[RMDB]
Overview
Chemical mapping of a 177-nucleotide RNA with DMS and 2A3. The data come from the RNA Mapping Database (RMDB), library RFM100. For DMS the reverse transcriptase was MarathonRT. The reactions ran in a buffer of 150 mM KOAc, 10 mM MgCl2 and 150 mM bicine (pH 8.5), at 24 C. Reactivities are rounded to 0.1 and cut off at 0 and 3. For 2A3, 413 sequencing reads were counted.
RNA sequence: GGGAACGACUCGAGUAGAGUCGAAAAAUUGGUUGAAUAUCACCCCCAGCUUUGGCCAUGGCCAUGGGUGAGAUUUGGCACCCAGAGCCUCCAGGGGCCUCAGCUUAUUGUGCACUGCCCCAUGUGCCAGGCUAAUCUCGUUCGCGAGAUUAGCCUGAAAAGAAACAACAACAACAAC
Reactivity to DMS in 0.01 (KOAc 150mM, MgCl2 10mM, bicine 150mM(pH8.5), 24C), signal-to-noise 2, nucleotides 027 to 126: a060u000u000g010g010u000u000g000a170a030u000a100u020c030a070c000c020c000c090c030a060g010c040u000u050u000g010g020c010c000a140u000g000g010c010c060a110u000g000g000g000u000g000a030g000a130u040u030u010g000g000c020a020c050c000c000a000g000a300g000c010c010u030c180c190a190g000g010g000g020c000c000u000c030a030g000c010u020u010a100u000u000g000u060g000c070a080c040u000g000c040c000c060c110a220u000g000u040g000c030
Reactivity to 2A3 in 0.01 (KOAc 150mM, MgCl2 10mM, bicine 150mM(pH8.5), 24C), signal-to-noise 1, nucleotides 027 to 126: a000u150u080g020g020u070u010g090a030a000u080a070u200c030a050c010c030c000c020c000a000g010c000u080u070u100g030g000c050c080a130u080g010g000c020c100a150u000g000g000g000u020g030a020g000a080u120u230u300g010g000c030a020c000c010c000a000g010a000g020c000c000u000c020c010a200g000g000g010g000c010c030u000c000a000g020c000u020u060a140u020u230g020u060g000c010a000c000u070g000c220c000c000c000a000u120g010u000g000c020